An RNA of 207 nucleotides, treated with DMS and 2A3 and read out base by base. 2A3 is a SHAPE reagent: it acylates the 2'-hydroxyl of flexible nucleotides of all four kinds. In probing experiments dimethyl sulfate is read out at A N1 and C N3, which are open when not base-paired. DMS adducts were read by reverse transcription with MarathonRT. 2A3 adducts were read by reverse transcription with SuperScript II with manganese. For DMS, 2,310 sequencing reads were counted. Source: RMDB library OK3TST, as collected in RNAgym. The 2A3 profile rests on 2,049 reads. The reactions ran in a buffer of 150 mM KOAc, 10 mM MgCl2 and 150 mM bicine (pH 8.5), at 24 C.
RNA sequence: GGGAACGACUCGAGUAGAGUCGAAAAUGCUUUGACUUUGGUUGGAACUCGCCAGAGGCGCUCUAUCUCCCGCCUGAACCUGACACACCACCACAGCAACCUCAGGCACACGCACUACCACCACCACAGCCUAGGCCACAAUACAUGCCCAUAUUAGCUAUGAGACGAAGUUCGCUUCGUCUCAUAGAAAAGAAACAACAACAACAAC
Reactivity to DMS in 0.01 (KOAc 150mM, MgCl2 10mM, bicine 150mM(pH8.5), 24C), signal-to-noise 1, nucleotides 027 to 156: u000g040c060u010u000u000g010a040c040u000u000u000g000g060u010u000g030g010a080a170c050u000c030g040c040c040a140g030a100g000g020c010g000c050u000c050u000a120u000c100u010c010c000c030g050c080c020u000g000a040a130c030c010u030g000a140c070a090c060a100c070c020a060c010c030a090c070a090g060c110a080a060c060c010u010c060a030g000g040c000a070c050a120c040g000c000a050c000u000a090c000c000a050c080c000a050c020c020a080c040a050g010c000c010u000a040g000g020c020c020a060c050a060a040u020a040c040a070u010g050c080c010c010a140u000a120u000u000a110g020
Reactivity to 2A3 in 0.01 (KOAc 150mM, MgCl2 10mM, bicine 150mM(pH8.5), 24C), signal-to-noise 3, nucleotides 027 to 156: u100g040c010u080u050u140g020a120c030u100u030u050g020g030u070u080g030g020a090a050c050u040c090g000c020c030a030g010a040g070g000c050g010c040u050c040u070a180u060c050u020c000c010c000g030c010c020u030g020a060a040c010c020u070g070a030c000a010c010a020c080c060a040c040c010a020c030a010g000c030a040a040c000c020u020c030a010g020g030c020a020c000a010c070g030c010a040c040u030a050c030c030a030c010c000a020c010c020a030c010a030g020c000c000u040a030g050g000c030c000a070c020a040a050u110a080c050a040u160g070c020c020c040a040u140a140u250u170a050g020